Description:
An RNA of 177 nucleotides, treated with 2A3 and DMS and read out base by base. Reactivities are rounded to 0.1 and cut off at 0 and 3. The RNA was probed in 150 mM KOAc, 10 mM MgCl2 and 150 mM bicine (pH 8.5) at 24 C. For 2A3, 17,789 sequencing reads were counted.

[RMDB]
RNA sequence: GGGAACGACUCGAGUAGAGUCGAAAACAAUUAACGGCACCUCGUAGGUGGUGCCGAACCUGCGUGAUCUACUAACACGCUACGAGCAGUCUGGUAUGACUGCAAACAAUUAGUAGAGUGGAUGAAACCGUAUACUAUUAUUCGUAAUAGUAUACGGAAAAGAAACAACAACAACAAC
Reactivity to 2A3 in 0.01 (KOAc 150mM, MgCl2 10mM, bicine 150mM(pH8.5), 24C), signal-to-noise 9, nucleotides 027 to 126: c060a020a100u220u160a140a060c000g000g000c000a000c000c020u090c080g150u140a120g030g300u070g000g000u000g010c000c000g000a000a060c000c000u010g000c000g000u010g010a020u020c000u000a010c000u000a040a000c000a000c000g010c040u080a080c080g040a040g000c000a000g000u000c000u140g200g080u300a120u290g020a010c000u000g000c000a000a010a010c010a010a060u020u010a000g000u000a000g000a040g080u180g090g040a100u090g140a090a040a030
Reactivity to DMS in 0.01 (KOAc 150mM, MgCl2 10mM, bicine 150mM(pH8.5), 24C), signal-to-noise 7, nucleotides 027 to 126: c210a090a100u020u040a110a160c050g010g020c010a000c000c000u010c050g010u070a130g010g020u000g000g010u000g010c010c000g010a010a020c040c030u000g010c000g020u010g010a130u000c000u010a000c000u000a010a010c020a010c000g000c010u030a060c220g010a190g000c000a000g010u000c000u010g020g030u040a090u030g010a010c000u000g000c000a040a040a070c140a060a090u000u000a020g010u000a010g000a200g010u020g010g010a140u020g000a100a140a150